[RMDB]
Structure probing data (2A3 and DMS) for a 177-nucleotide construct.
2A3 adducts were read by reverse transcription with SuperScript II with manganese.
For 2A3, 6,376 sequencing reads were counted.
RNA sequence: GGGAACGACUCGAGUAGAGUCGAAAAUACUCAGGCGAGCAAACUUCAACUUCAUUUCAAACUCCGUCAAACGUUGAAUCGACUCGGCGGACUCCAAGCGAUGGUCAGCGCUUGCGGAUGAGCCGCGGUAAUACAUUGCCUUCGGGCAAUGUAUUACAAAAGAAACAACAACAACAAC
Reactivity to 2A3 in 0.01 (KOAc 150mM, MgCl2 10mM, bicine 150mM(pH8.5), 24C), signal-to-noise 7, nucleotides 027 to 126: u080a010c020u010c050a010g050g010c020g040a060g020c050a080a070a070c020u060u030c040a030a030c020u080u070c050a170u090u090u100c100a110a100a060c040u010c030c030g080u120c070a090a090a070c080g020u010u040g040a060a060u050c040g040a050c060u000c050g060g000c000g010g030a030c010u010c000c000a010a010g010c000g040a040u100g060g110u080c040a030g020c000g020c020u010u030g010c110g080g020a070u100g010a030g000c000c000g000c000g020
Reactivity to DMS in 0.01 (KOAc 150mM, MgCl2 10mM, bicine 150mM(pH8.5), 24C), signal-to-noise 4, nucleotides 027 to 126: u040a060c040u000c030a100g010g010c020g040a100g020c040a050a050a150c100u020u000c070a040a060c060u040u030c090a120u010u000u030c060a080a120a090c080u000c020c010g010u000c070a080a050a030c120g000u000u010g010a010a110u010c050g010a210c060u010c020g000g000c060g000g000a080c030u030c000c020a040a010g010c020g010a110u020g030g000u010c050a070g010c020g020c020u000u000g010c090g000g020a060u010g020a150g010c000c010g010c080g000